[RMDB]
RNA sequence: GGGAACGACUCGAGUAGAGUCGAAAACUGACUAGACUUCGGUCUAGUCAGAAAAAAACCUUUGUGUCUUACGUCAUCGAUCGUACCAGCCCAUUGGGCUGUGUACGGGAGACGAAGACACUCUGGUAAAAAACUUCGAGGCUUCGGCCUCGAAGAACAGCACUUAACUCUUCGGAGUUAAGUGCUGAAAAGAAACAACAACAACAAC
Reactivity to 2A3 in 0.01 (KOAc 150mM, MgCl2 10mM, bicine 150mM(pH8.5), 24C), signal-to-noise 1, nucleotides 027 to 156: c000u010g010a010c000u000a010g010a000c000u030u080c300g010g010u030c000u000a000g000u000c000a000g000a000a000a000a000a010a000a000c030c000u060u010u000g010u010g000u000c010u000u050a280c030g020u000c010a300u190c080g190a250u130c020g050u000a000c010c000a020g050c000c010c070a300u180u300g000g000g000c020u020g030u050g000u020a010c000g000g010g000a050g000a010c010g000a000a000g000a000c000a000c000u000c000u000g000g000u110a130a000a000a000a150a180c000u010u010c000g000a000g000g000c000u030u250c300g070g020c000c000u000c000g010a000a000g000a030a010